An RNA of 207 nucleotides, treated with 2A3 and read out base by base. Values cover nucleotides 27 to 156.
RNA sequence: GGGAACGACUCGAGUAGAGUCGAAAACAAAAGUAACAUCUCUCAUAGGCUUUUUGGCAGUUAUAGCUUACACUCUCCUAUAAUAAAAUAUACAUUGUCUUGUAACCAACAUUUUCAGAGAAUUUGCCCUUAAAGUCAAUUCUGGGCAGACCCAAGAGAUCAGUAGUCGAUUCGUCGACUACUGAUCAAAAGAAACAACAACAACAAC
Reactivity to 2A3 in 0.01 (KOAc 150mM, MgCl2 10mM, bicine 150mM(pH8.5), 24C), signal-to-noise 1, nucleotides 027 to 156: c000a000a110a020a060g040u120a090a040c060a110u060c050u010c000u000c150a110u050a090g010g000c000u050u000u000u050u180g000g000c020a010g020u020u170a180u090a100g010c020u040u090a010c050a000c010u110c000u040c020c040u070a060u140a300a040u020a020a050a000a080u300a050u040a060c010a030u070u070g010u040c000u070u060g070u050a050a100c040c040a020a070c010a040u010u070u120u190c100a050g000a000g100a130a080u100u040u040g000c020c000c000u000u010a060a060a000g060u140c060a050a090u120u020c000u040g000g000g030c000a000g000a000c010c000c000a060a020g060a010
The RNA was probed in 150 mM KOAc, 10 mM MgCl2 and 150 mM bicine (pH 8.5) at 24 C. The 2A3 profile rests on 384 reads.